Structure probing data (2A3 and DMS) for a 207-nucleotide construct.
The 2A3 profile rests on 2,283 reads.
Conditions: 150 mM KOAc, 10 mM MgCl2 and 150 mM bicine (pH 8.5), 24 C.
DMS adducts were read by reverse transcription with MarathonRT.
[RMDB]
RNA sequence: GGGAACGACUCGAGUAGAGUCGAAAAGAGAUACUACCCAAGACUGGGUAAUUUAUAAAGGAAAGAGGUUUAAUUGAUGACUCACAGUUCCACAUAACAGGGGAGGCCUCAAGAAACUUACCAUCACGGUGAAGGUGAAGGGUACCUUUGCACAUGAAAAUCACUAGUGAUUCGUCACUAGUGAUUUAAAAGAAACAACAACAACAAC
Reactivity to 2A3 in 0.01 (KOAc 150mM, MgCl2 10mM, bicine 150mM(pH8.5), 24C), signal-to-noise 4, nucleotides 027 to 156: g050a010g000a010u040a080c020u020a020c010c000c000a010a040g190a100c170u090g000g000g000u000a010a060u040u170u090a180u090a050a100a020g030g000a080a100a060g040a030g030g030u030u060u230a090a070u100u050g050a040u070g020a020c000u010c030a050c000a030g020u050u020c030c000a050c010a090u180a090a070c030a040g050g000g000g000a000g040g020c020c000u020c010a010a000g030a040a050a000c030u060u060a030c040c010a030u100c040a010c120g080g000u020g040a030a010g040g010u020g040a020a050g040g010g020u060a030c000c000u010u030u040g080c070a070c030a070u200g140a020
Reactivity to DMS in 0.01 (KOAc 150mM, MgCl2 10mM, bicine 150mM(pH8.5), 24C), signal-to-noise 2, nucleotides 027 to 156: g030a130g020a120u000a050c020u000a050c000c000c020a060a160g020a210c180u000g000g010g010u000a010a010u000u000u000a150u000a120a130a110g000g020a060a080a080g000a100g020g010u010u000u000a060a170u000u000g010a070u000g000a070c040u000c040a060c050a140g020u010u000c030c030a060c060a100u010a120a120c090a090g020g010g040g040a140g020g010c030c000u020c040a060a060g020a080a040a050c030u010u010a060c050c020a070u000c060a040c070g000g020u030g020a070a040g020g000u020g000a070a050g010g020g010u000a040c010c010u000u000u000g010c020a110c050a050u010g010a050